[RMDB]
RNA sequence: GGGAACGACUCGAGUAGAGUCGAAAAGGUAGGGCAUUCGUGCCCUACCACACCUCUAAGCAGAUUGGCGAGGACGACGACGCGGCCCACGUUUACCAACAACUACUCUCUCCUUCGGGAGAGAGAAGUCAGAGAGAUGAUUCGUCAUCUCUCUGACAAAAGAAACAACAACAACAAC
Reactivity to DMS in 0.01 (KOAc 150mM, MgCl2 10mM, bicine 150mM(pH8.5), 24C), signal-to-noise 3, nucleotides 027 to 126: g030g010u000a010g010g000g030c000a040u000u010c180g010u000g000c000c000c000u010a000c000c000a020c140a090c010c010u000c120u000a060a120g040c070a060g010a090u000u000g000g010c090g040a090g000g000a070c050g000a060c080g010a060c080g020c050g000g000c010c010c050a140c060g000u000u020u020a150c030c020a060a030c140a060a050c160u000a160c000u000c000u000c000u000c000c000u000u010c170g020g000g010a010g010a010g000a000g010a040a030
Reactivity to 2A3 in 0.01 (KOAc 150mM, MgCl2 10mM, bicine 150mM(pH8.5), 24C), signal-to-noise 4, nucleotides 027 to 126: g000g000u010a000g010g010g010c010a010u030u080c200g100u050g000c000c000c000u000a000c000c000a000c010a000c000c010u030c050u080a100a060g030c060a040g050a300u110u150g060g010c030g020a040g000g030a060c040g030a020c020g000a010c020g020c020g060g000c020c020c000a050c010g000u010u060u050a170c030c010a040a070c010a020a030c030u090a060c000u020c000u010c000u010c010c000u020u050c210g070g020g000a000g010a000g000a000g000a000a000